Chemical mapping of a 177-nucleotide RNA with DMS.
RNA sequence: GGGAACGACUCGAGUAGAGUCGAAAAAGCCGGAGCGAAAGCGAGUCUGAAUAGGGCGUUUAGUUGUAUGUCAUAGACCCGAAACUGAAGUGAGCUAGCCAUGAACAGGCUGAAGUGACGUGACCACGUCUUAACCUGCCUUCGGGCAGGUUAAGACAAAAGAAACAACAACAACAAC
Reactivity to DMS in 0.01 (KOAc 150mM, MgCl2 10mM, bicine 150mM(pH8.5), 24C), signal-to-noise 1, nucleotides 027 to 126: a110g030c040c000g000g010a090g030c010g000a070a080a060g020c060g010a090g000u000c020u000g040a100a070u030a090g020g000g000c040g000u000u000u010a130g000u000u000g000u000a020u020g000u000c030a020u000a040g000a140c020c040c010g010a040a060a130c100u010g000a060a070g010u010g000a060g010c110u000a050g020c030c020a050u010g010a100a140c170a040g010g000c030u000g000a060a120g020u010g010a030c050g010u000g000a110c040c070a090c100
The reactions ran in a buffer of 150 mM KOAc, 10 mM MgCl2 and 150 mM bicine (pH 8.5), at 24 C. It was measured as part of the RMDB library OK2TRN.